Background:
Structure probing data (DMS and 2A3) for a 177-nucleotide construct. In probing experiments dimethyl sulfate is read out at A N1 and C N3, which are open when not base-paired. The DMS profile rests on 2,501 reads. The reactions ran in a buffer of 150 mM KOAc, 10 mM MgCl2 and 150 mM bicine (pH 8.5), at 24 C. Reactivities are rounded to 0.1 and cut off at 0 and 3.

RNA sequence: GGGAACGACUCGAGUAGAGUCGAAAACAUGAUAAUUCAAUCGAUCGAUGGAAUCUUCCUCAUAUCGUGGUUUCGUCAACGAUUCGAUCACUAUCGAUAGUUUAUCCAUAUCGAUAAUGAUAAACUAGAGGAUAGGACUAUUCGUAGUCCUAUCCUCAAAAGAAACAACAACAACAAC
Reactivity to DMS in 0.01 (KOAc 150mM, MgCl2 10mM, bicine 150mM(pH8.5), 24C), signal-to-noise 3, nucleotides 027 to 126: c100a090u010g000a040u010a070a120u010u020c080a050a050u000c020g000a090u000c160g000a050u000g010g000a040a060u000c070u000u000c050c060u000c110a130u010a070u010c070g020u000g020g020u000u000u000c010g020u000c020a090a100c070g000a020u010u000c130g000a030u000c010a030c020u000a010u000c010g000a040u000a000g000u000u000u000a070u010c150c140a150u000a040u000c040g000a010u000a000a030u000g000a010u000a040a070a080c170u000a040
Reactivity to 2A3 in 0.01 (KOAc 150mM, MgCl2 10mM, bicine 150mM(pH8.5), 24C), signal-to-noise 5, nucleotides 027 to 126: c050a090u180g050a090u210a230a140u250u120c020a010a020u030c010g080a050u080c020g020a000u030g030g020a010a020u010c020u100u070c060c040u140c050a100u080a060u200c100g060u070g010g020u030u020u030c010g020u010c040a030a020c020g020a020u070u100c050g060a020u020c000a000c020u020a020u010c000g020a060u010a020g020u020u130u090a120u030c090c040a080u010a020u060c040g040a010u010a050a020u060g010a020u060a040a100a040c060u040a060